[RMDB]
RNA sequence: GGGAACGACUCGAGUAGAGUCGAAAAUGAAACCCAGAGCUCUUAACGCUGUGACCAAAGAUGGAAGUUCUCUAUAGGAAGCCAUAGCACUCCUAAUGUUUGGUGCUAUGUUUUCCUGAGGAGAUAUCUUACACAAGCGAUUCGUCGCUUGUGUAAGAAAAGAAACAACAACAACAAC
Reactivity to DMS in 0.01 (KOAc 150mM, MgCl2 10mM, bicine 150mM(pH8.5), 24C), signal-to-noise 3, nucleotides 027 to 126: u010g000a080a090a120c040c010c020a130g000a070g020c030u000c090u000u010a070a120c120g000c020u000g020u030g000a090c090c010a080a140a080g020a080u010g020g010a060a080g010u020u000c000u000c000u010a130u030a020g000g000a040a010g000c070c000a000u010a010g000c000a010c010u000c300c180u060a150a160u020g010u030u030u020g010g000u000g040c000u000a000u010g000u000u000u000u000c000c000u000g000a100g000g000a000g000a040u010a050u020
Reactivity to 2A3 in 0.01 (KOAc 150mM, MgCl2 10mM, bicine 150mM(pH8.5), 24C), signal-to-noise 4, nucleotides 027 to 126: u160g020a030a000a010c000c000c000a020g030a000g060c030u040c030u170u110a070a040c060g000c030u070g020u030g080a050c020c040a120a070a030g110a060u160g040g020a040a020g050u050u000c010u000c010u010a060u130a100g000g000a000a000g000c000c000a000u000a030g000c010a000c010u130c040c060u210a290a140u250g170u140u110u190g020g010u000g000c000u000a000u000g000u000u010u000u000c000c000u000g010a040g010g010a010g000a010u040a030u010